Structure probing data (DMS and 2A3) for a 177-nucleotide construct.
RNA sequence: GGGAACGACUCGAGUAGAGUCGAAAAGAUAUGGAGCGUGAACUACUUGGCUAGGGCACAACAGCUUCUUACGCUCGGAAACGAGCGUAAGAAGACAUGUGUACCAAACCAAGCACGCUCCUAAGUCGAAUCUCGUAAAGUUCGCUUUACGAGAUUCAAAAGAAACAACAACAACAAC
Reactivity to DMS in 0.01 (KOAc 150mM, MgCl2 10mM, bicine 150mM(pH8.5), 24C), signal-to-noise 3, nucleotides 027 to 126: g010a080u010a300u000g000g000a010g020c010g050u010g000a070a040c060u040a300c000u000u000g000g030c030u000a300g000g010g000c010a020c000a100a050c290a230g000c000u000u000c000u010u010a000c000g010c010u000c000g010g000a090a120a200c000g010a020g040c020g030u000a000a010g000a010a000g000a020c110a090u000g000u000g010u010a060c000c010a050a120a260c000c010a000a010g000c020a000c000g010c000u010c020c000u010a000a080g010u010c130
Reactivity to 2A3 in 0.01 (KOAc 150mM, MgCl2 10mM, bicine 150mM(pH8.5), 24C), signal-to-noise 2, nucleotides 027 to 126: g100a040u170a070u250g000g020a000g000c000g010u020g000a070a070c100u140a030c010u300u020g020g000c030u020a030g020g010g030c010a020c010a060a120c060a050g060c020u020u000c000u000u010a010c020g000c020u000c000g020g000a090a110a060c010g000a000g020c010g000u000a000a010g000a000a000g030a000c000a040u050g010u000g000u130a300c010c000a040a030a020c000c000a000a000g000c000a000c020g000c000u020c010c000u000a000a000g010u010c040
DMS adducts were read by reverse transcription with MarathonRT. For 2A3 the reverse transcriptase was SuperScript II with manganese.